[RMDB]
RNA sequence: GGGAACGACUCGAGUAGAGUCGAAAACGAGGGACGCAAACGUCACACGCCGCCGCGGAUGGGUUUCCUUCAACGUCAGCAGCGAGAAUGCAACGUCCGCGGAGGUGAACGGUUGACCGUCAUGCCACCAUAGCGCUGGUUUCGACCAGCGCUAUGGAAAAGAAACAACAACAACAAC
Reactivity to DMS in 0.01 (KOAc 150mM, MgCl2 10mM, bicine 150mM(pH8.5), 24C), signal-to-noise 1, nucleotides 027 to 126: c100g070a300g000g000g020a040c000g000c010a030a000a080c040g020u000c160a080c230a300c060g000c000c000g000c020c000g030c060g020g000a010u000g000g030g000u000u000u110c040c170u000u030c190a200a120c040g000u000c080a030g000c000a210g000c040g060a170g010a100a080u050g050c130a130a010c000g020u000c000c000g000c000g000g000a010g000g000u000g000a100a030c000g010g000u030u000g000a080c090c000g000u000c080a000u050g000c030c080a210
Reactivity to 2A3 in 0.01 (KOAc 150mM, MgCl2 10mM, bicine 150mM(pH8.5), 24C), signal-to-noise 3, nucleotides 027 to 126: c070g010a140g040g160g030a000c010g000c040a010a080a000c030g070u100c120a010c020a010c140g030c000c000g010c000c000g000c020g000g000a010u050g090g060g090u010u060u030c020c000u050u110c130a300a210c120g100u110c080a070g000c000a000g000c080g020a030g040a120a000u070g010c060a050a040c010g010u000c000c000g000c000g000g000a000g010g000u010g020a080a000c020g030g020u010u030g040a130c070c000g020u020c010a020u150g040c030c030a040
This 177-nucleotide RNA was probed chemically with DMS and 2A3. The DMS profile rests on 1,449 reads. Reactivities are given for positions 27 through 126. Conditions: 150 mM KOAc, 10 mM MgCl2 and 150 mM bicine (pH 8.5), 24 C. DMS adducts were read by reverse transcription with MarathonRT. It was measured as part of the RMDB library OK1LIB. For 2A3 the reverse transcriptase was SuperScript II with manganese.